[RMDB]
RNA sequence: GGGAACGACUCGAGUAGAGUCGAAAAGAUAUGGACCCUGUAGUGAUCUUGGAUUUAUCGGAAACGAUUGUCAGAUCCUAUGGGUCCUAAGUCAAAACUCAGGGUGAGGUUCGCCUCACCCUGAGAAGAACAGUUCGUAGUUCGCUACGAACUGUUCAAAAGAAACAACAACAACAAC
Reactivity to DMS in 0.01 (KOAc 150mM, MgCl2 10mM, bicine 150mM(pH8.5), 24C), signal-to-noise 2, nucleotides 027 to 126: g010a040u010a300u000g000g000a010c000c010c030u020g050u010a000g020u030g010a000u010c010u010u010g040g000a020u000u020u000a010u000c000g000g000a080a100a170c010g030a010u000u020g020u000c010a030g000a020u000c000c000u000a020u000g010g010g030u000c000c010u010a000a110g000u000c020a060a110a110a110c010u000c000a000g000g000g020u000g000a040g010g030u000u020c300g000c010c000u000c000a000c000c010c000u000g000a000g010a030a030
Reactivity to 2A3 in 0.01 (KOAc 150mM, MgCl2 10mM, bicine 150mM(pH8.5), 24C), signal-to-noise 1, nucleotides 027 to 126: g020a000u030a000u110g000g010a010c000c020c040u080g030u030a110g030u180g120a010u020c050u060u240g240g000a100u300u300u160a020u090c000g020g030a060a050a070c000g000a020u000u050g020u020c000a010g000a000u050c000c000u040a020u000g000g030g020u000c020c000u000a010a000g000u020c020a010a010a080a180c010u000c000a000g020g040g000u000g010a010g020g030u040u240c300g130c050c000u000c000a000c000c000c000u000g000a010g000a000a000

About this RNA: Conditions: 150 mM KOAc, 10 mM MgCl2 and 150 mM bicine (pH 8.5), 24 C. The record gives the reactivity of an RNA of 177 nucleotides to DMS and 2A3. It was measured as part of the RMDB library TTRDEL. The 2A3 profile rests on 2,489 reads. Reactivities are given for positions 27 through 126.